[RMDB]
RNA sequence: GGGAACGACUCGAGUAGAGUCGAAAAUAUUCUAGCGCCGUAUUUUGUGUGUGCGACAGACGCGCAUACCGAUUUGUCCACGUCGGGAUUUUUGCUUAUUUUGUAGACGAUGAUAGCAAAAGUGUCGCUAUCGAUGCUGCUCACAUGUGAAUGAAAAUGAGAAUAUUCUAUUCGUAGAAUAUUCUCAAAAAGAAACAACAACAACAAC
Reactivity to 2A3 in 0.01 (KOAc 150mM, MgCl2 10mM, bicine 150mM(pH8.5), 24C), signal-to-noise 4, nucleotides 027 to 156: u110a020u040u050c050u040a060g030c020g000c080c050g060u050a130u030u110u120u060g030u000g010u000g000u010g010c010g030a030c020a060g130a040c020g010c010g000c030a010u030a040c000c010g030a050u040u050u200g040u000c040c000a020c030g040u020c020g020g020g020a030u060u020u020u030u060g010c000u050u060a050u070u190u040u060g090u090a070g010a060c080g030a040u130g000a020u070a020g030c030a010a050a050a060g080u120g040u080c010g000c030u020a020u070c020g000a010u070g020c010u010g000c000u030c050a040c020a050u150g030u040g080a070a060u190g050a020a220a010a020
Reactivity to DMS in 0.01 (KOAc 150mM, MgCl2 10mM, bicine 150mM(pH8.5), 24C), signal-to-noise 3, nucleotides 027 to 156: u000a060u000u000c040u000a090g010c040g040c020c050g020u010a020u000u010u000u010g020u010g010u010g020u030g030c020g030a140c080a170g010a200c050g020c030g010c030a090u010a080c050c030g000a130u000u010u000g010u000c040c170a030c050g000u000c040g000g030g000a020u010u000u020u000u010g000c010u000u010a100u000u000u000u000g020u010a060g010a070c070g000a110u000g010a080u000a030g000c020a040a030a060a110g020u000g030u010c070g010c020u000a100u000c040g010a140u000g000c020u000g020c010u000c060a120c060a160u000g010u010g010a110a080u010g000a090a070a110a190

An RNA of 207 nucleotides, treated with 2A3 and DMS and read out base by base. 2A3 adducts were read by reverse transcription with SuperScript II with manganese.